[RMDB]
RNA sequence: GGGAACGACUCGAGUAGAGUCGAAAAGUAUGGAUGCCACCGUGACGGCUCAAUCACACAAGUGCCACCGAUAACGAGGCGCUCGCUAUUGCUGCGUAACUGACGGCCUGACGGUCUGACGUUACAAAAAACGAAAAGUGGUUCGCCACUUUUCGAAGGUACCACUUCUGUUCGCAGAAGUGGUACCAAAAGAAACAACAACAACAAC
Reactivity to 2A3 in 0.01 (KOAc 150mM, MgCl2 10mM, bicine 150mM(pH8.5), 24C), signal-to-noise 2, nucleotides 027 to 156: g060u040a010u120g020g040a020u070g020c040c040a060c040c020g050u100g020a050c100g020g050c030u100c130a070a140u180c060a040c020a020c050a200a070g000u030g010c030c030a080c040c020g100a090u150a190a110c030g000a100g050g030c080g060c050u040c010g040c030u100a090u190u090g040c090u180g020c070g000u020a010a000c010u000g000a000c000g000g020c000c000u180g090a060c150g020g000u000c020u000g020a020c040g010u010u050a020c010a000a010a000a000a000a000c000g000a000a000a000a000g000u010g030g000u050u060c100g030c060c000a000c000u010u010u000u010c010g000a030a020